[RMDB]
RNA sequence: GGGAACGACUCGAGUAGAGUCGAAAAGAUAUGGAACCGUAGAGCUCUUCCAUUAAGGGAGACGGCAUGUCGGAAACGACAUGACGUCUUUGAUCUUACGGUGGAAGAGCUCUACGGUUCCUAAGUCCAAUUGUUCUUAGUUCGCUAAGAACAAUUGAAAAGAAACAACAACAACAAC
Reactivity to DMS in 0.01 (KOAc 150mM, MgCl2 10mM, bicine 150mM(pH8.5), 24C), signal-to-noise 6, nucleotides 027 to 126: g010a090u010a300u010g000g010a000a000c000c010g000u000a010g000a020g000c010u000c000u000u000c000c000a010u000u000a050a040g000g000g000a010g020a010c000g000g000c000a010u000g000u000c000g000g000a150a110a270c010g010a010c000a010u000g000a010c000g010u000c000u000u000u010g020a110u010c020u000u020a060c300g020g010u000g010g010a020a010g000a010g020c000u000c000u000a000c010g000g000u000u000c000c000u000a000a050g000u000c040

Source: RMDB library TTRINS, as collected in RNAgym. The record gives the reactivity of an RNA of 177 nucleotides to DMS. Reactivities are given for positions 27 through 126.